The record gives the reactivity of an RNA of 177 nucleotides to 2A3 and DMS. The reactions ran in a buffer of 150 mM KOAc, 10 mM MgCl2 and 150 mM bicine (pH 8.5), at 24 C. Reactivities are given for positions 27 through 126.
RNA sequence: GGGAACGACUCGAGUAGAGUCGAAAAUCACACGCCAACAUCAACAAGAUCACUAAGGUUUGAGGAUAAGACGUCUCGCGGACUGCGUCGUAGCGUUGAUGGAGUGUGUGACGCAGUCACCAAACUAGUAGUAUUAGUGCUUCGGCACUAAUACUACAAAAGAAACAACAACAACAAC
Reactivity to 2A3 in 0.01 (KOAc 150mM, MgCl2 10mM, bicine 150mM(pH8.5), 24C), signal-to-noise 7, nucleotides 027 to 126: u050c010a000c010a010c020g040c050c030a100a060c000a070u030c000a020a040c020a070a060g070a150u090c030a040c170u170a120a100g150g040u040u090u130g080a060g040g010a030u050a130a070g080a040c070g040u030c030u050c080g080c070g050g020a030c020u020g000c020g000u010c020g020u040a030g070c040g060u020u030g040a050u050g010g040a070g020u040g000u010g010u010g000a000c000g000c010a010g020u030c010a030c100c020a050a050a030c040u100a050
Reactivity to DMS in 0.01 (KOAc 150mM, MgCl2 10mM, bicine 150mM(pH8.5), 24C), signal-to-noise 6, nucleotides 027 to 126: u010c010a020c010a030c020g020c060c060a080a190c040a030u000c010a020a030c040a160a110g000a070u000c060a090c110u010a100a130g010g010u000u000u010g020a120g000g020a090u000a070a110g000a050c080g000u000c020u000c060g030c120g010g000a030c020u000g000c030g020u000c010g010u010a100g010c120g010u000u000g000a050u000g010g000a080g020u000g000u000g010u000g010a010c020g020c050a050g000u000c010a060c100c100a060a040a090c200u000a110